[RMDB]
RNA sequence: GGGAACGACUCGAGUAGAGUCGAAAAAUACAGUUGAUCCACACUAACGUUGGUGUCGACAUACUAUCAGUCUCUAAGGAUUGAAAGUAAGUUGAUAAUGACCAAGUCAAGGUCCAGGCUGGCAACACUAAUUCGAGGCAUUCGUGCCUCGAAUUAGAAAAGAAACAACAACAACAAC
Reactivity to 2A3 in 0.01 (KOAc 150mM, MgCl2 10mM, bicine 150mM(pH8.5), 24C), signal-to-noise 3, nucleotides 027 to 126: a000u120a010c030a020g020u000u030g040a100u020c040c000a030c010a010c030u110a150a020c030g130u080u060g000g030u030g020u010c010g010a000c010a020u020a010c000u010a010u030c000a020g000u000c020u010c040u210a120a100g110g000a000u010u000g010a040a000a000g000u000a040a040g000u010u010g010a030u050a140a100u200g050a020c030c000a100a040g070u170c050a100a080g000g050u040c020c020a010g000g030c020u010g070g000c020a090a050c030a030
Reactivity to DMS in 0.01 (KOAc 150mM, MgCl2 10mM, bicine 150mM(pH8.5), 24C), signal-to-noise 2, nucleotides 027 to 126: a070u000a010c080a000g000u000u020g010a070u010c010c000a020c110a000c080u000a150a100c260g030u000u010g060g020u010g010u000c000g000a000c000a080u000a010c030u000a050u000c000a010g000u000c010u020c190u060a070a140g010g040a020u000u000g000a010a090a050g020u000a000a020g010u010u000g000a020u010a070a070u000g010a070c000c080a120a050g030u020c080a100a110g000g030u000c000c110a050g000g010c010u000g000g010c050a130a090c160a240